[RMDB]
RNA sequence: GGGAACGACUCGAGUAGAGUCGAAAAUAAGCUAAGCGGUCUCUCCUCUCCAUCGCCCAUGUGGAGUGGCUGAGACUCAACUUUAGUGGGAUACGCCUUUCUCCCCCCGCCUGAGGGAGAAGGAAGAGACUAAUCAGGCUAGCUGCACGGAGGCCUGCAUUUGAUAGCAGUUCGCUGCUAUCAAAUGAAAAGAAACAACAACAACAAC
Reactivity to DMS in 0.01 (KOAc 150mM, MgCl2 10mM, bicine 150mM(pH8.5), 24C), signal-to-noise 2, nucleotides 027 to 156: u000a060a240g000c010u000a040a090g000c030g030g010u000c000u010c000u010c020c000u000c010u000c010c010a010u000c080g020c070c070c040a080u000g070u010g000g000a010g000u000g020g020c120u000g010a050g020a030c020u010c040a040a060c080u000u000u000a040g040u000g010g000g000a100u000a130c050g010c020c010u010u000u000c020u010c000c000c000c010c030c050g000c040c020u010g000a050g010g010g020a040g010a060a010g000g020a030a040g000a210g000a100c130u000a070a050u000c010a040g020g080c020u000a130g010c010u000g000c000a140c060g000g000a140g010g020c010c010u000g020
Reactivity to 2A3 in 0.01 (KOAc 150mM, MgCl2 10mM, bicine 150mM(pH8.5), 24C), signal-to-noise 4, nucleotides 027 to 156: u130a030a000g070c110u070a070a010g090c070g170g010u000c000u000c010u000c010c000u000c000u000c000c000a010u010c010g030c000c010c000a000u030g010u000g010g000a010g010u010g010g020c190u050g000a010g030a010c010u010c040a020a100c030u130u180u190a010g000u010g010g000g000a010u010a010c010g010c000c000u070u230u050c010u010c010c010c000c000c010c010g000c000c000u000g000a010g000g000g000a010g000a000a000g010g010a010a000g010a000g010a010c090u150a050a030u040c000a010g010g000c000u000a020g010c000u020g010c020a040c100g050g040a040g020g040c010c030u060g010